[RMDB]
RNA sequence: GGGAACGACUCGAGUAGAGUCGAAAAGUGGCAUACUUCGGUAUGCCACAAACCAGACCCUAACUGGAACACGCUCUACUGCGUGAUCCCAAGUAGAUCCCAAAAGUCGUGGGUUCGCCCACGACAACUCUGUUACGUACUUCGGUACGUAACAGAGAAAAGAAACAACAACAACAAC
Reactivity to DMS in 0.01 (KOAc 150mM, MgCl2 10mM, bicine 150mM(pH8.5), 24C), signal-to-noise 2, nucleotides 027 to 126: g000u000g000g060c000a000u020a000c000u000u010c240g060g020u000a000u000g010c000c000a010c020a010a040a070c050c090a080g000a100c080c130c040u000a060a050c060u000g010g000a100a160c030a030c020g000c000u000c300u000a100c140u000g020c020g020u000g010a080u000c040c000c050a120a030g000u000a000g010a120u000c000c010c020a140a060a110a080g020u000c020g030u000g000g000g020u000u000c190g020c050c000c000a000c020g010a000c000a040a050
Reactivity to 2A3 in 0.01 (KOAc 150mM, MgCl2 10mM, bicine 150mM(pH8.5), 24C), signal-to-noise 3, nucleotides 027 to 126: g010u000g010g020c020a000u010a000c010u050u080c230g070g000u010a000u000g010c000c000a010c000a000a010a010c020c010a030g110a040c040c020c020u060a110a070c030u030g000g000a030a020c000a010c020g020c010u050c080u250a160c130u110g030c000g000u000g040a060u010c020c010c000a070a000g010u020a010g010a110u050c010c000c000a040a120a010a070g010u000c010g010u000g000g030g010u010u030c210g100c010c000c000a000c000g010a000c000a000a000